RNA sequence: GGGAACGACUCGAGUAGAGUCGAAAAGCUUUAAAUAAUGCGGGUCUACGUCAUCAAUGACGUUGUACCACGCAUCAUUACUGUACACCUUUGGGCUUAGGUCUAGAUGUCCACAUAAAUAAUUAUGCGGAUGCGAGACAUUCGUGUCUCGCAUCCGAAAAGAAACAACAACAACAAC
Reactivity to 2A3 in 0.01 (KOAc 150mM, MgCl2 10mM, bicine 150mM(pH8.5), 24C), signal-to-noise 2, nucleotides 027 to 126: g000c010u020u000u050a060a030a000u110a020a000u000g000c000g000g000g010u000c000u040a040c000g000u000c000a040u110c020a080a300u130g000a000c000g000u030u030g070u030a000c000c000a180c050g000c000a000u000c000a030u000u060a080c010u070g100u060a080c040a080c030c000u010u010u010g000g000g000c000u080u140a050g000g250u000c000u110a040g030a020u070g000u000c050c000a050c000a000u150a020a260a000u210a090a030u200u150a000u210g060
Source: RMDB library OK1LIB, as collected in RNAgym. The record gives the reactivity of an RNA of 177 nucleotides to 2A3. The 2A3 profile rests on 597 reads. The reactions ran in a buffer of 150 mM KOAc, 10 mM MgCl2 and 150 mM bicine (pH 8.5), at 24 C.